[RMDB]
RNA sequence: GGGAACGACUCGAGUAGAGUCGAAAAGUGUCUCUUCUCUCGCUUCCUCCCUCCUCAUUUUGCUCCUGAUCAUUUCUGCCAAGGGAGUCUGAGCCCUUGGGUUGAAGAAGCAUUUCCUCCACCAGAGCACAAUAAUUUAGUUCGCUAAAUUAUUGUGAAAAGAAACAACAACAACAAC
Reactivity to DMS in 0.01 (KOAc 150mM, MgCl2 10mM, bicine 150mM(pH8.5), 24C), signal-to-noise 6, nucleotides 027 to 126: g020u010g010u000c010u000c020u000u000c030u000c020u000c050g010c090u000u000c020c020u000c030c010c010u000c020c020u010c050a080u000u000u010u000g010c030u000c010c020u000g010a090u010c090a120u000u000u000c050u000g010c010c010a020a030g000g010g010a080g010u010c130u010g010a170g010c000c000c010u000u000g000g000g010u010u010g000a070a050g010a060a080g010c060a070u000u000u000c010c010u000c030c030a100c080c060a120g010a120g010
Reactivity to 2A3 in 0.01 (KOAc 150mM, MgCl2 10mM, bicine 150mM(pH8.5), 24C), signal-to-noise 3, nucleotides 027 to 126: g070u070g060u020c010u000c000u040u000c020u000c000u010c020g090c090u040u020c010c000u030c000c020c000u010c000c020u010c040a090u080u150u090u080g010c010u000c010c010u030g060a070u080c050a050u040u110u070c030u040g040c010c000a020a000g000g000g000a020g090u000c080u110g080a070g040c010c000c020u020u010g040g000g000u040u080g030a050a040g030a020a020g000c010a020u030u030u010c000c000u040c020c000a060c020c030a060g000a020g130